Conditions: 150 mM KOAc, 10 mM MgCl2 and 150 mM bicine (pH 8.5), 24 C. Chemical mapping of a 177-nucleotide RNA with DMS.

RNA sequence: GGGAACGACUCGAGUAGAGUCGAAAACUAUCGCAGGAUAUUAGAAGGCAGUAUGUGGUUGUCUUAGUCAAGAUCCUUUCUUUUCCCCGAUUAACAGAAACCCACUUACGCUAGUCUAAGUAGAAGGUACACGUUCGUUAUUCGUAACGAACGUGUAAAAAGAAACAACAACAACAAC
Reactivity to DMS in 0.01 (KOAc 150mM, MgCl2 10mM, bicine 150mM(pH8.5), 24C), signal-to-noise 3, nucleotides 027 to 126: c030u010a040u010c070g000c170a110g000g010a080u000a090u010u010a040g000a100a130g010g010c030a050g020u000a030u010g020u000g010g020u000u010g010u000c030u000u010a070g010u000c080a070a070g000a070u000c020c030u010u000u000c030u010u000u000u000c000c000c030c170g000a070u000u000a070a060c170a030g010a060a060a070c130c010c020a020c020u000u000a050c040g010c030u000a080g010u000c030u000a030a040g000u000a060g000a080a080g010g010
For DMS, 2,975 sequencing reads were counted.